[RMDB]
The data come from the RNA Mapping Database (RMDB), library OK2TRN. Chemical mapping of a 177-nucleotide RNA with DMS. The RNA was probed in 150 mM KOAc, 10 mM MgCl2 and 150 mM bicine (pH 8.5) at 24 C.
RNA sequence: GGGAACGACUCGAGUAGAGUCGAAAACUUUUUGUACUUGACGGUUUAAGCCGAUUGGUUGGUCUUUACCAGUACCUUUUAAGAACGCAGUUUCAAGCGCCACUGCAAAUGCUUCUUCGAUUUGAACAAGCCCAUAUAGGUUCGCCUAUAUGGGCUUAAAAGAAACAACAACAACAAC
Reactivity to DMS in 0.01 (KOAc 150mM, MgCl2 10mM, bicine 150mM(pH8.5), 24C), signal-to-noise 2, nucleotides 027 to 126: c060u000u000u000u000u000g000u000a040c080u000u010g010a130c110g020g010u000u000u000a080a090g020c020c020g020a170u000u000g000g010u000u000g000g000u000c030u010u000u010a070c050c020a050g030u000a050c040c070u000u000u000u000a110a050g020a070a150c110g010c050a060g020u010u000u000c070a090a060g020c130g020c060c070a060c070u000g020c060a070a070a080u010g010c050u010u010c050u000u000c120g000a130u000u010u000g010a060a140c160